[RMDB]
RNA sequence: GGGAACGACUCGAGUAGAGUCGAAAAGAGAGCGCAUUUUCUCUCGUAAAUCAAAUUUGCAUAUUUUAGUCGCAAACGACGAAUCUUACGCUCUAGCUGCCUAAGGGCAGCUUGUCCGCUUCACUGAAUACUUGUGGUCAGUGGACCCGACUGUAGCCUUGCUGUCGGUGUUCGCACCGACAGCAAGAAAAGAAACAACAACAACAAC
Reactivity to 2A3 in 0.01 (KOAc 150mM, MgCl2 10mM, bicine 150mM(pH8.5), 24C), signal-to-noise 1, nucleotides 027 to 156: g010a000g010a000g010c010g000c020a030u010u030u020u070c010u000c000u020c010g080u080a050a000a050u120c020a000a000a000u000u000u020g000c010a010u080a300u110u260u040u130a060g010u000c000g030c090a020a170a050c150g060a000c020g000a010a020u000c070u120u020a030c030g000c000u000c040u070a010g020c010u000g000c000c000u030a000a200g030g000g000c000a000g000c000u000u000g010u060c000c010g030c010u000u030c020a000c070u000g020a070a070u110a150c050u150u210g050u070g160g040u110c040a000g000u000g000g010a020c050c010c000g090a040c050u150g080u220a030g050c000
The record gives the reactivity of an RNA of 207 nucleotides to 2A3. The RNA was probed in 150 mM KOAc, 10 mM MgCl2 and 150 mM bicine (pH 8.5) at 24 C.